An RNA of 177 nucleotides, treated with 2A3 and read out base by base. The data come from the RNA Mapping Database (RMDB), library OK1LIB.
RNA sequence: GGGAACGACUCGAGUAGAGUCGAAAAAAAGAACGUUGGGAAUAACAGCGGGCAGCCAAGCACGGUCGUAGACAACACACUUGUUCUCAUGGUCUCUUUUCUCUACGCUUACAUUCAUAAAACCGGGCCCUGUGGCCUGAUUCGUCAGGCCACAGGGAAAAGAAACAACAACAACAAC
Reactivity to 2A3 in 0.01 (KOAc 150mM, MgCl2 10mM, bicine 150mM(pH8.5), 24C), signal-to-noise 1, nucleotides 027 to 126: a000a040a000g070a090a000c070g000u050u080g010g000g000a020a170u080a060a000c000a000g010c040g120g020g010c010a000g030c030c030a120a000g090c110a020c010g120g000u010c110g000u000a020g010a150c040a040a030c000a110c000a000c000u010u140g030u240u000c000u030c000a050u190g070g000u020c040u000c000u060u010u020u000c070u000c030u030a090c000g140c090u000u070a020c000a030u000u080c000a040u130a120a100a000a050c030c050g000g070g000